RNA sequence: GGGAACGACUCGAGUAGAGUCGAAAAAUAAAUAAGGAAAGGGUGGAAUAAAAGUAUCUCAUCAGGUAUAUUUAAAUUACACGGUAGUUAAGGAGGUAACGAUAAGUUGAGUAAUUUUAACAUCAUGUGAUUAUAGAAUGUUCGCAUUCUAUAAUCAAAAAGAAACAACAACAACAAC
Reactivity to DMS in 0.01 (KOAc 150mM, MgCl2 10mM, bicine 150mM(pH8.5), 24C), signal-to-noise 7, nucleotides 027 to 126: a090u030a060a070a080u020a090a090g000g000a050a040a060g000g000g030u000g000g000a080a060u020a050a090a070a150g010u010a020u000c030u000c090a050u030c090a060g020g000u010a050u010a050u010u010u010a030a070a080u020u010a050c060a080c060g010g000u010a040g010u000u000a040a110g000g010a060g010g010u010a020a040c080g010a060u020a040a070g010u010u000g010a060g010u030a030a080u020u020u010u010a030a070c060a050u020c140a050u020g010
Reactivity to 2A3 in 0.01 (KOAc 150mM, MgCl2 10mM, bicine 150mM(pH8.5), 24C), signal-to-noise 5, nucleotides 027 to 126: a000u130a000a030a030u170a040a010g030g030a050a030a050g040g000g000u030g030g050a050a010u110a060a130a030a000g030u030a060u020c040u000c030a100u060c050a000g010g050u040a060u010a040u050u170u090a090a160a030u020u030a030c050a010c020g030g020u030a060g020u060u050a040a020g020g020a040g000g030u040a040a010c020g020a040u040a180a080g010u010u020g020a000g020u040a030a090u030u040u020u130a030a040c020a040u120c010a030u120g030